[RMDB]
RNA sequence: GGGAACGACUCGAGUAGAGUCGAAAAAAUUGAUGCAAGGUGUGGAGCGACCUUAAACAGUUCUGGUGGUGCUCUGAAUGGAGUGCUCUACUGAGAUUACAAAAUAGAAGGUAAGCUAUUAUCUCUUAAAACGCAAUAGAGUUCGCUCUAUUGCGAAUCCGCAACAUAAGUUCGCUUAUGUUGCGGAAAAAGAAACAACAACAACAAC
Reactivity to 2A3 in 0.01 (KOAc 150mM, MgCl2 10mM, bicine 150mM(pH8.5), 24C), signal-to-noise 2, nucleotides 027 to 156: a010a000u150u170g000a080u070g050c040a030a030g000g000u030g000u120g010g020a030g000c000g020a000c030c010u060u090a120a000a000c020a050g000u050u030c000u010g040g020u080g030g000u000g010c000u000c010u050g120a100a070u260g010g010a020g040u020g000c020u030c030u040a050c040u020g010a000g010a110u000u200a070c020a030a200a020a010u080a030g080a060a000g110g040u110a040a030g000c050u040a040u090u050a020u050c040u020c020u030u000a050a190a030a010c040g000c000a000a000u000a000g000a010g000u010u020c040g020c010u000c000u000a000u000u000g000c000g010a000a010